[RMDB]
The record gives the reactivity of an RNA of 177 nucleotides to DMS and 2A3. Values cover nucleotides 27 to 126. As a SHAPE reagent, 2A3 marks flexible, mostly unpaired nucleotides at the ribose 2'-OH. It was measured as part of the RMDB library OK2TRN.
RNA sequence: GGGAACGACUCGAGUAGAGUCGAAAACGGCGCCGCACAACACGUCUGCGUCGAGAGAAAGGCAUUGCGGCACUGAUGCGCUCGACCUUGUAAAGUGAAAGGAGCGCGCCUGCUACAAGGUGCGCUACAGGAGAGAAGCUUUCGAGCUUCUCUCCUGAAAAGAAACAACAACAACAAC
Reactivity to DMS in 0.01 (KOAc 150mM, MgCl2 10mM, bicine 150mM(pH8.5), 24C), signal-to-noise 3, nucleotides 027 to 126: c060g010g010c080g000c020c060g010c040a110c300a100a140c140a100c070g000u010c090u020g020c100g010u000c020g020a050g010a080g000a090a070a130g010g000c010a030u000u010g010c020g000g010c020a050c070u010g000a060u000g000c030g000c010u000c030g010a030c020c110u000u000g010u010a050a060a120g010u010g010a110a130a110g010g020a050g000c000g010c020g020c000c000u000g000c120u010a140c150a090a020g000g020u000g000c000g010c000u000a080
Reactivity to 2A3 in 0.01 (KOAc 150mM, MgCl2 10mM, bicine 150mM(pH8.5), 24C), signal-to-noise 2, nucleotides 027 to 126: c000g050g000c030g000c010c020g080c010a060c040a040a280c030a010c130g070u050c090u130g030c030g050u010c020g000a000g000a000g000a040a140a000g040g000c050a060u040u130g040c010g020g020c030a020c090u170g030a090u130g010c010g000c000u000c010g040a070c010c010u050u140g130u200a170a170a130g030u080g170a100a040a070g140g030a020g000c020g000c010g010c000c000u020g040c040u100a060c020a090a010g000g010u000g000c010g000c000u040a050